[RMDB]
RNA sequence: GGGAACGACUCGAGUAGAGUCGAAAAUUAAAGAGCGUAGCACACACUCAGACUAAGUCUGUCACACACAUACGCUAAUCAUCUCUGUGUGUGUUCGAGAUAUCGAUAAGUGUAUGAGAUGAAAAAACUUACAGAUGAAGUUCGCUUCAUCUGUAAGAAAAGAAACAACAACAACAAC
Reactivity to DMS in 0.01 (KOAc 150mM, MgCl2 10mM, bicine 150mM(pH8.5), 24C), signal-to-noise 6, nucleotides 027 to 126: u000u010a060a110a160g010a150g010c000g020u000a060g020c130a050c080a060c050a060c050u000c020a020g000a040c050u010a120a160g020u000c000u000g000u000c010a010c010a010c000a020c010a050u000a020c010g000c010u010a080a110u000c010a010u000c000u000c080u000g000u000g010u000g010u000g020u010u000c020g000a030g010a150u010a080u000c020g010a040u010a040a070g010u000g020u000a050u000g000a040g000a020u010g010a000a070a090a060a070a090
Reactivity to 2A3 in 0.01 (KOAc 150mM, MgCl2 10mM, bicine 150mM(pH8.5), 24C), signal-to-noise 5, nucleotides 027 to 126: u170u100a090a060a040g110a020g010c010g000u010a000g030c040a000c010a000c000a010c060u040c020a010g010a020c040u200a280a070g040u010c010u010g020u040c000a010c000a000c000a000c000a010u020a040c010g030c070u050a050a060u020c000a000u000c000u010c010u010g010u000g000u000g010u000g000u020u020c020g030a020g040a140u170a090u200c020g010a010u010a100a070g010u010g000u020a020u040g010a000g000a000u000g000a140a010a010a000a010a000

An RNA of 177 nucleotides, treated with DMS and 2A3 and read out base by base.
For 2A3, 12,301 sequencing reads were counted.
The data come from the RNA Mapping Database (RMDB), library M2PK90.
2A3 is a SHAPE reagent: it acylates the 2'-hydroxyl of flexible nucleotides of all four kinds.
For DMS the reverse transcriptase was MarathonRT.